[RMDB]
Source: RMDB library TTRDES, as collected in RNAgym. This 177-nucleotide RNA was probed chemically with 2A3 and DMS. The RNA was probed in 150 mM KOAc, 10 mM MgCl2 and 150 mM bicine (pH 8.5) at 24 C. 2A3 adducts were read by reverse transcription with SuperScript II with manganese. DMS adducts were read by reverse transcription with MarathonRT.
RNA sequence: GGGAACGACUCGAGUAGAGUCGAAAAGAUAUGGAACCACGUAUCAGCAGCGAAGAACUCGCUCGGAAACGAGCGAGGGAGCUGGUAUGGUUCCUAAGUCAAACUAUCUGCCUUCGGGCAGAUAGAAGAUUAACAUUAACUUCGGUUAAUGUUAAUCAAAAGAAACAACAACAACAAC
Reactivity to 2A3 in 0.01 (KOAc 150mM, MgCl2 10mM, bicine 150mM(pH8.5), 24C), signal-to-noise 8, nucleotides 027 to 126: g010a000u050a010u110g000g010a010a010c010c020a050c200g060u120a130u300c120a080g250c030a000g060c080g200a300a020g040a070a040c010u000c000g000c000u000c000g000g000a020a040a010c010g010a010g000c000g000a000g000g010g000a020g000c020u040g030g040u180a150u090g000g000u000u000c000c000u010a050a000g020u010c030a050a060a120c010u000a000u000c010u000g010c020c000u050u130c300g040g000g000c000a000g010a000u000a000g000a010a010
Reactivity to DMS in 0.01 (KOAc 150mM, MgCl2 10mM, bicine 150mM(pH8.5), 24C), signal-to-noise 7, nucleotides 027 to 126: g000a030u010a300u010g010g000a010a020c000c000a100c260g020u000a050u000c110a130g010c030a150g010c130g000a140a160g000a170a220c010u000c000g000c000u010c010g000g000a050a070a140c000g000a010g000c010g010a010g000g000g010a120g010c000u000g020g020u010a030u000g000g000u000u000c000c000u000a020a070g010u010c010a150a160a280c010u000a000u000c000u000g000c000c000u000u010c270g040g010g020c010a000g000a000u000a000g000a070a080